[RMDB]
RNA sequence: GGGAACGACUCGAGUAGAGUCGAAAAGUAGGUUAGCUGCGUUGUGUUAGCCUUGCUGGCUGGCGCGACAUCGCGGCGAAUUUUAAAUAAGUCAGCUAUAGGUGUAGAGCUGCAUGUAGCAGGGGUGAUGGACAGGAGUUCGAUUCUCCUCACCUCCGGAUUAAUAUGCGUUCGCGCAUAUUAAUCCAAAAGAAACAACAACAACAAC
Reactivity to 2A3 in 0.01 (KOAc 150mM, MgCl2 10mM, bicine 150mM(pH8.5), 24C), signal-to-noise 6, nucleotides 027 to 156: g110u130a030g030g100u130u100a010g000c010u010g010c010g000u020u020g020u010g010u060u090a010g010c010c010u040u240g070c090u070g020g000c010u010g010g000c010g000c000g010a020c000a020u060c030g000c000g010g000c020g010a010a020u090u120u050u160a070a070a040u070a040a010g020u040c010a000g000c030u060a070u080a120g070g010u070g020u050a040g030a020g050c030u020g010c030a050u110g050u140a030g030c090a050g000g020g000g010u040g010a060u190g030g030a040c090a080g000g010a020g020u060u080c030g030a060u070u000c010u010c000c000u010c010a020c000c000u000c030c030
Reactivity to DMS in 0.01 (KOAc 150mM, MgCl2 10mM, bicine 150mM(pH8.5), 24C), signal-to-noise 3, nucleotides 027 to 156: g000u010a080g050g020u000u000a080g020c010u000g010c000g020u000u000g010u000g010u000u000a110g030c010c010u010u020g030c150u010g010g040c010u000g010g010c000g000c030g030a080c020a040u000c050g030c020g010g030c010g020a010a020u000u000u020u010a060a090a160u020a080a080g020u010c020a050g010c010u000a120u000a060g010g020u000g000u000a070g020a130g020c020u000g000c050a070u010g010u000a070g000c040a090g020g010g030g020u000g000a050u020g030g000a100c080a090g000g000a070g020u000u000c100g010a290u000u000c010u000c010c010u000c010a020c010c010u010c030c070
Chemical mapping of a 207-nucleotide RNA with 2A3 and DMS. Source: RMDB library RSTRND, as collected in RNAgym. 2A3 adducts were read by reverse transcription with SuperScript II with manganese.